[RMDB]
Background: This 177-nucleotide RNA was probed chemically with 2A3 and DMS. Values cover nucleotides 27 to 126. It was measured as part of the RMDB library OK1LIB. The 2A3 profile rests on 2,643 reads. Conditions: 150 mM KOAc, 10 mM MgCl2 and 150 mM bicine (pH 8.5), 24 C.

RNA sequence: GGGAACGACUCGAGUAGAGUCGAAAAUCGUUUGCUCUUAUUCGCCCUCAAAGAAGAGCGUCCUAGAUAUUAAGACUAUAUAUAUUUGUGGGUGUAUAGUUUUGUCGGGGUGCAGACAGAGGAGACGGGAUAAUAAAAUAUUCGUAUUUUAUUAUCCAAAAGAAACAACAACAACAAC
Reactivity to 2A3 in 0.01 (KOAc 150mM, MgCl2 10mM, bicine 150mM(pH8.5), 24C), signal-to-noise 4, nucleotides 027 to 126: u100c020g010u030u020u070g070c010u010c010u030u050a060u090u050c020g030c000c010c010u020c050a100a080a010g110a030a000g030a010g020c000g000u010c010c000u060a080g010a020u070a050u090u130a110a010g000a030c000u010a000u000a010u000a010u000a060u080u110u150g120u090g050g080g000u010g000u000a040u000a020g000u010u010u030u050g020u010c010g000g000g000g000u020g010c000a030g080a150c040a030g020a010g050g020a050g020a060c050g050
Reactivity to DMS in 0.01 (KOAc 150mM, MgCl2 10mM, bicine 150mM(pH8.5), 24C), signal-to-noise 2, nucleotides 027 to 126: u040c030g020u000u010u010g010c030u020c010u010u000a210u000u010c010g000c030c000c020u000c040a100a050a080g010a060a120g000a240g010c040g000u010c010c010u000a080g020a070u010a060u020u030a040a140g010a100c030u040a060u000a060u010a010u010a050u010u000u010g010u000g000g020g010u010g020u000a050u050a040g000u010u010u010u010g000u020c140g010g000g000g020u010g030c050a030g000a160c250a060g020a050g000g000a070g000a040c080g000